Structure probing data (DMS and 2A3) for a 177-nucleotide construct. It was measured as part of the RMDB library OK1LIB. DMS adducts were read by reverse transcription with MarathonRT. The DMS profile rests on 7,453 reads. In probing experiments dimethyl sulfate is read out at A N1 and C N3, which are open when not base-paired.

[RMDB]
RNA sequence: GGGAACGACUCGAGUAGAGUCGAAAAGUGAGUCAGGUGUUAAGAACAUCUGCAGAGAAUAUCUAGGAGCCUCUUUUCGGUUUUGCAGCUGAUAUUCGUAGGAAUAAGUUGUAAAUUAAUGCACCAGAAUCGUAUAGCAUUUCGAUGCUAUACGAUUAAAAGAAACAACAACAACAAC
Reactivity to DMS in 0.01 (KOAc 150mM, MgCl2 10mM, bicine 150mM(pH8.5), 24C), signal-to-noise 4, nucleotides 027 to 126: g000u010g010a070g020u070c010a010g000g020u000g010u020u020a130a130g030a130a180c020a000u000c000u000g000c040a160g020a100g000a140a050u010a050u010c030u010a110g010g000a090g000c010c030u010c070u020u010u020u030c080g000g010u020u000u000u000g000c030a060g020c040u000g000a090u030a030u000u010c020g030u030a080g010g000a040a040u020a070a130g000u000u000g010u000a020a040a070u020u010a050a080u030g010c070a050c020c030a100g010
Reactivity to 2A3 in 0.01 (KOAc 150mM, MgCl2 10mM, bicine 150mM(pH8.5), 24C), signal-to-noise 7, nucleotides 027 to 126: g090u070g030a030g070u100c010a020g000g020u010g020u070u140a230a070g090a150a010c020a010u000c000u030g000c020a010g010a000g010a090a070u110a050u150c070u090a100g060g040a020g050c000c010u040c020u100u100u070u100c060g030g010u050u040u050u050g020c010a030g000c010u050g070a060u050a030u100u030c060g060u150a090g100g110a040a050u070a090a020g010u010u000g010u010a050a030a010u090u180a060a080u140g040c030a020c010c010a030g140